Source: RMDB library TTRDES, as collected in RNAgym. Structure probing data (2A3 and DMS) for a 177-nucleotide construct. The reactions ran in a buffer of 150 mM KOAc, 10 mM MgCl2 and 150 mM bicine (pH 8.5), at 24 C.
[RMDB]
RNA sequence: GGGAACGACUCGAGUAGAGUCGAAAAGAUAUGGAUAGGCGUGAACUACGUUCACGUCGGAAACGACGUGGGAGACGCACGACCUAUCCUAAGUCAAAAGUAGUUGACGGGUUCGCCCGUCAACUACCUACCGGACAGACUUCGGUCUGUCCGGUAGAAAAGAAACAACAACAACAAC
Reactivity to 2A3 in 0.01 (KOAc 150mM, MgCl2 10mM, bicine 150mM(pH8.5), 24C), signal-to-noise 1, nucleotides 027 to 126: g000a020u010a030u070g010g000a000u010a000g000g020c070g060u040g060a300a290c280u300a250c300g020u300u300c030a000c000g000u000c000g000g020a000a000a000c030g040a010c060g000u020g000g070g080a300g060a000c000g190c070a020c030g300a300c000c000u000a000u000c010c000u000a000a000g020u030c000a070a000a000a300g020u010a010g020u050u030g010a000c010g000g000g000u120u150c300g180c000c000c000g000u000c020a000a010c000u000a000c000
Reactivity to DMS in 0.01 (KOAc 150mM, MgCl2 10mM, bicine 150mM(pH8.5), 24C), signal-to-noise 1, nucleotides 027 to 126: g010a000u000a080u070g000g000a040u000a010g000g000c000g020u010g020a290a090c300u010a300c030g040u000u000c000a000c010g000u000c000g000g010a000a020a040c000g000a020c000g000u000g020g000g070a300g000a070c040g070c010a020c040g000a120c000c000u010a010u000c010c000u010a000a070g000u010c030a040a120a110a160g010u000a010g120u000u000g000a040c000g000g000g060u000u000c300g000c020c000c000g000u000c000a000a000c000u000a000c000
DMS adducts were read by reverse transcription with MarathonRT.